[RMDB]
Source: RMDB library OK1LIB, as collected in RNAgym. This 177-nucleotide RNA was probed chemically with DMS and 2A3. For DMS the reverse transcriptase was MarathonRT. The DMS profile rests on 5,732 reads.

RNA sequence: GGGAACGACUCGAGUAGAGUCGAAAACUUGCUGUAAACCAAAUUACGAGUGGUAAUGAAAGAAUAAGUUCAGUUAAUGGGCCACCAGGGACAGGUAAGACUACUUUAUUAAAAGAUAUAUUUGCUCAUGAUUAGUGAUGUUCGCAUCACUAAUCAUAAAAGAAACAACAACAACAAC
Reactivity to DMS in 0.01 (KOAc 150mM, MgCl2 10mM, bicine 150mM(pH8.5), 24C), signal-to-noise 4, nucleotides 027 to 126: c050u020u000g010c000u000g000u010a090a160a140c050c040a060a080a070u010u040a090c140g000a100g010u030g000g000u000a090a050u030g000a020a090a100g020a060a100u050a070a130g010u010u010c030a040g030u030u020a080a040u020g000g000g020c000c020a060c030c020a090g000g010g010a030c070a050g000g000u000a020a030g000a090c080u000a090c070u000u000u010a080u080u030a030a040a040a080g000a070u020a090u020a100u000u020u000g020c070u010c080
Reactivity to 2A3 in 0.01 (KOAc 150mM, MgCl2 10mM, bicine 150mM(pH8.5), 24C), signal-to-noise 6, nucleotides 027 to 126: c010u030u080g000c020u050g080u160a110a070a160c050c030a110a080a170u140u110a090c090g060a080g050u040g020g030u100a080a070u100g130a050a040a100g120a040a200u170a210a030g050u050u020c030a000g000u030u200a100a080u210g020g050g010c020c000a020c000c010a030g000g010g050a030c010a010g030g010u040a050a030g030a020c040u020a030c010u130u130u060a150u110u260a120a110a030a010g140a020u110a000u000a070u130u130u190g030c020u020c100
Conditions: 150 mM KOAc, 10 mM MgCl2 and 150 mM bicine (pH 8.5), 24 C.